[RMDB]
RNA sequence: GGGAACGACUCGAGUAGAGUCGAAAAGAUAUGGAGCAAACGCCGAAUAUAUAAGAGGCAUCGAUCAUGCGAUCGGAAACGAUCGUCAUGGGAGCCUUGAUGUAUAUUCGGCGUUUGCUCCUAAGUCGUUCUAAAUACAGUUCGCUGUAUUUAGAACAAAAGAAACAACAACAACAAC
Reactivity to DMS in 0.01 (KOAc 150mM, MgCl2 10mM, bicine 150mM(pH8.5), 24C), signal-to-noise 3, nucleotides 027 to 126: g000a110u010a300u000g010g010a000g000c000a010a010a020c010g010c000c010g010a020a000u000a010u000a000u020a180a300g000a000g000g020c000a300u010c190g010a110u010c000a010u010g000c020g010a010u000c000g000g000a110a110a200c010g010a000u010c000g000u010c030a010u010g020g000g000a070g000c010c010u000u000g010a080u020g000u000a000u000a000u000u000c020g000g020c000g000u000u000u000g000c000u000c000c000u000a010a060g010u010c090

Structure probing data (DMS) for a 177-nucleotide construct. Values cover nucleotides 27 to 126. The reactions ran in a buffer of 150 mM KOAc, 10 mM MgCl2 and 150 mM bicine (pH 8.5), at 24 C.